[RMDB]
RNA sequence: GGGAACGACUCGAGUAGAGUCGAAAAGAUAUGGACAUGUGGAACGCAUCUGGCCGAGUACUAUCUUCAAUCGGAAACGAUUGAAGAUAGUAUAUCCAGAUGAACUACGUUAUACAUGUCCUAAGUCCUGGUUAAGUAUGUUCGCAUACUUAACCAGAAAAGAAACAACAACAACAAC
Reactivity to DMS in 0.01 (KOAc 150mM, MgCl2 10mM, bicine 150mM(pH8.5), 24C), signal-to-noise 4, nucleotides 027 to 126: g000a090u000a290u000g000g010a020c000a010u000g010u010g000g010a040a020c020g020c010a020u000c000u000g010g010c300c190g000a260g020u010a000c010u000a010u000c000u010u000c000a010a010u010c000g000g000a170a100a210c000g000a000u010u000g010a010a000g000a000u000a000g020u010a010u000a120u000c000c000a000g000a020u000g000a060a050c150u020a300c010g010u000u000a060u000a010c000a000u000g000u000c000c010u000a010a110g010u000c020
Reactivity to 2A3 in 0.01 (KOAc 150mM, MgCl2 10mM, bicine 150mM(pH8.5), 24C), signal-to-noise 2, nucleotides 027 to 126: g040a030u120a060u170g020g010a010c010a000u010g000u020g060g020a030a000c000g000c060a000u010c010u020g000g010c100c090g070a110g120u070a020c010u010a010u010c000u040u000c000a000a010u010c000g000g050a070a060a080c010g010a000u010u010g010a000a000g000a000u010a000g010u010a000u000a000u000c000c000a000g010a010u010g000a010a000c040u120a030c030g000u000u020a020u010a070c000a010u010g000u010c000c000u000a010a030g000u020c000
The data come from the RNA Mapping Database (RMDB), library TTRINS.
The record gives the reactivity of an RNA of 177 nucleotides to DMS and 2A3.
The DMS profile rests on 5,033 reads.
DMS adducts were read by reverse transcription with MarathonRT.